[RMDB]
Chemical mapping of a 177-nucleotide RNA with DMS. The data come from the RNA Mapping Database (RMDB), library TTRDES. The DMS profile rests on 751 reads.

RNA sequence: GGGAACGACUCGAGUAGAGUCGAAAAAAGAUAUGGACAACUAGUAGCUGCCAGAACUACGUUCGGGAAGCAUCGGAAACGAUGCUUUCUCUAGCGUGACGCUGGCCGAAAGUUGUCCUAAGUCAAACAGAUUUUCUCAGUUCGCUGAGAAAAUCUGAAAAGAAACAACAACAACAAC
Reactivity to DMS in 0.01 (KOAc 150mM, MgCl2 10mM, bicine 150mM(pH8.5), 24C), signal-to-noise 1, nucleotides 027 to 126: a170a060g010a030u010a300u010g000g020a030c000a000a010c020u000a110g000u000a150g000c260u020g000c000c030a020g000a150a050c080u020a000c000g020u000u010c250g000g000g020a020a000g000c000a010u000c000g020g000a120a040a300c000g020a020u000g000c000u000u000u000c000u020c010u000a050g000c000g000u000g000a120c300g030c000u000g000g000c030c010g000a070a130a130g020u000u000g000u000c000c030u000a010a110g040u000c030a090a120a230
For DMS the reverse transcriptase was MarathonRT.